[RMDB]
RNA sequence: GGGAACGACUCGAGUAGAGUCGAAAACAAAAAGGGGGAGGCCAAGGGAAGAAGAAGAAGAACCAGGGGAAGAAGAAGGCCAAGACGGGGCCGCCUAAUCCGAAGGCACAGAGUGGAAACAAGAAGACACAAAUCCUAGAUUCGUCUAGGAUUUGUGAAAAGAAACAACAACAACAAC
Reactivity to DMS in 0.01 (KOAc 150mM, MgCl2 10mM, bicine 150mM(pH8.5), 24C), signal-to-noise 1, nucleotides 027 to 126: c080a020a070a080a110a220g030g000g000g020g020a070g000g000c060c090a060a140g040g030g010a080a060g000a110a050g000a070a070g000a030a050g000a070a150c120c060a080g000g020g020g010a060a060g000a020a060g000a180a060g020g020c080c010a030a070g010a140c140g000g000g020g020c050c060g000c090c040u000a150a090u000c060c060g000a060a060g000g040c020a050c030a050g000a070g000u020g000g000a080a030a070c070a050a040g020a070a060g020a220

The record gives the reactivity of an RNA of 177 nucleotides to DMS.
It was measured as part of the RMDB library OK2TRN.
Conditions: 150 mM KOAc, 10 mM MgCl2 and 150 mM bicine (pH 8.5), 24 C.